[RMDB]
RNA sequence: GGGAACGACUCGAGUAGAGUCGAAAACCAGCAGCCAUGACCUACCAGGCUGCGGUGCGGCUCGCCGCACAGGUCAUCGCUCAUCGGGCGCGUCCUGCGUCCUUCCACGCCAACCCACAAGGGAUCUAAAACACGUUGGGCUUCGGCCCAACGUGAAGACUCUUGUAAUGUUCGCAUUACAAGAGUCAAAAGAAACAACAACAACAAC
Reactivity to 2A3 in 0.01 (KOAc 150mM, MgCl2 10mM, bicine 150mM(pH8.5), 24C), signal-to-noise 2, nucleotides 027 to 156: c010c010a010g000c010a000g000c000c020a190u140g030a030c010c020u190a260c110c060a020g030g000c010u000g000c010g000g010u010g000c050g020g000c040u080c180g160c010c000g000c010a000c020a000g020g040u030c020a050u070c090g060c080u100c070a130u190c120g020g000g000c000g000c040g050u150c040c080u130g010c000g030u000c020c000u080u050c020c000a050c020g010c020c020a090a080c030c000c000a080c090a230a100g010g010g000a010u020c020u140a070a020a030a040c000a000c000g000u000u000g000g000g020c020u030u090c140g080g000c000c000c000a000a000c030g000u000g010a000a010

An RNA of 207 nucleotides, treated with 2A3 and read out base by base. The data come from the RNA Mapping Database (RMDB), library M2RFPK. Conditions: 150 mM KOAc, 10 mM MgCl2 and 150 mM bicine (pH 8.5), 24 C.